The record gives the reactivity of an RNA of 207 nucleotides to 2A3. It was measured as part of the RMDB library ARCHII. For 2A3, 468 sequencing reads were counted. The RNA was probed in 150 mM KOAc, 10 mM MgCl2 and 150 mM bicine (pH 8.5) at 24 C. 2A3 adducts were read by reverse transcription with SuperScript II with manganese.

RNA sequence: GGGAACGACUCGAGUAGAGUCGAAAAGGGGGCGAUUAGGAUUCGACGCCGGUAACAAAACCCGAAGUGCAUGUCGUGAGGGUAGCCAAUCACGUAAAUCCAAAGCUGCAAAUUAUCAGUUGCCAAUGAUGACAACUACGGUGCUCAACUAGCUGCGGAACGAUCAACAGUUCGCUGUUGAUCGUUCAAAAGAAACAACAACAACAAC
Reactivity to 2A3 in 0.01 (KOAc 150mM, MgCl2 10mM, bicine 150mM(pH8.5), 24C), signal-to-noise 1, nucleotides 027 to 156: g010g000g000g000g000c000g010a010u000u080a070g050g100a070u030u020c040g000a020c020g000c000c000g000g040u090a110a000c080a030a140a030a060c040c060c090g020a140a010g000u070g060c070a100u080g020u090c010g010u040g010a000g000g000g000u030a030g050c050c070a040a040u060c020a000c110g100u130a060a000a070u090c080c010a020a000a070g000c010u010g040c060a000a000a240u180u130a130u270c010a040g010u070u060g010c000c000a050a050u150g040a150u140g000a030c020a030a000c070u040a020c050g050g000u030g060c000u010c010a010a020c040u060a010g060c040u040g040c040g010